[RMDB]
RNA sequence: GGGAACGACUCGAGUAGAGUCGAAAACAUGGAGUGUUCGCACUCCAUGAAAAUGCGCACGGCAGCGCAAGACGGGCCGACGUCAAUAAAUGGCGUAAUAAAAAAUCUAUCUGUUCGCAGAUAGAAAGUUAUGAGCAUACUUCGGUAUGCUCAUAACAAAAGAAACAACAACAACAAC
Reactivity to DMS in 0.01 (KOAc 150mM, MgCl2 10mM, bicine 150mM(pH8.5), 24C), signal-to-noise 2, nucleotides 027 to 126: c000a000u000g000g000a020g010u010g030u010u020c230g010c000a000c000u000c000c020a000u000g000a030a040a090a160u000g030c020g010c030a110c060g020g030c050a210g020c030g040c020a050a090g000a030c100g030g010g000c040c020g010a070c020g000u000c000a020a160u000a020a130a160u000g000g010c000g020u000a040a040u030a000a060a100a080a020a100u000c000u000a000u000c000u000g010u000u000c190g010c000a030g000a000u000a000g000a010a020a070
Reactivity to 2A3 in 0.01 (KOAc 150mM, MgCl2 10mM, bicine 150mM(pH8.5), 24C), signal-to-noise 2, nucleotides 027 to 126: c020a000u000g000g000a000g000u020g010u080u060c130g060c050a000c000u000c000c010a000u020g000a000a000a000a010u140g000c010g000c020a040c030g100g000c000a040g020c040g010c030a010a020g090a050c060g030g120g000c010c020g000a020c000g000u030c020a030a090u170a190a090a100u070g010g000c040g010u010a000a200u200a080a180a000a000a010a020u000c000u010a010u000c010u010g080u070u040c220g000c060a010g000a000u000a000g040a030a000a000

Chemical mapping of a 177-nucleotide RNA with DMS and 2A3. The RNA was probed in 150 mM KOAc, 10 mM MgCl2 and 150 mM bicine (pH 8.5) at 24 C.